Source information
Source: RMDB library OK1LIB, as collected in RNAgym. The record gives the reactivity of an RNA of 177 nucleotides to 2A3 and DMS. The DMS profile rests on 112,948 reads. The reactions ran in a buffer of 150 mM KOAc, 10 mM MgCl2 and 150 mM bicine (pH 8.5), at 24 C. Reactivities are given for positions 27 through 126.

RNA sequence: GGGAACGACUCGAGUAGAGUCGAAAACUUCUUCUAGGCCCAAGAGCGAUACGCGCUCUUAUGAGCUGAUAAGGGGGCGGGUAUGCCACGAGGCAGAGGCAAGGCGGCUGCUCUCUGGUCUGGGCGGUCUGUGAGUACCAUUCGUGGUGCUCGCGGGAAAAGAAACAACAACAACAAC
Reactivity to 2A3 in 0.01 (KOAc 150mM, MgCl2 10mM, bicine 150mM(pH8.5), 24C), signal-to-noise 9, nucleotides 027 to 126: c000u030u010c000u040u010c030u040a020g040g000c000c000c000a010a010g010a000g000c020g030a030u060a110c090g010c010g010c050u000c000u000u010a100u050g040a020g040c050u030g030a040u040a050a030g020g010g000g020g010c050g000g020g010u060a050u150g020c000c010a050c100g030a070g040g020c030a020g010a030g050g030c050a060a050g110g020c040g040g010c020u010g000c000u010c000u000c010u050g000g030u000c010u010g000g000g010c010g010g030
Reactivity to DMS in 0.01 (KOAc 150mM, MgCl2 10mM, bicine 150mM(pH8.5), 24C), signal-to-noise 9, nucleotides 027 to 126: c090u000u010c040u010u010c080u010a180g010g000c000c010c060a060a050g000a040g010c030g010a190u050a080c220g010c010g010c000u000c000u000u000a060u020g000a120g020c080u020g000a080u020a060a050g000g000g000g000g000c030g000g000g000u010a060u020g010c010c010a090c160g010a080g000g010c030a050g010a070g000g010c040a110a120g010g010c050g010g000c020u010g000c010u010c010u000c020u000g000g010u010c060u010g000g000g010c050g000g000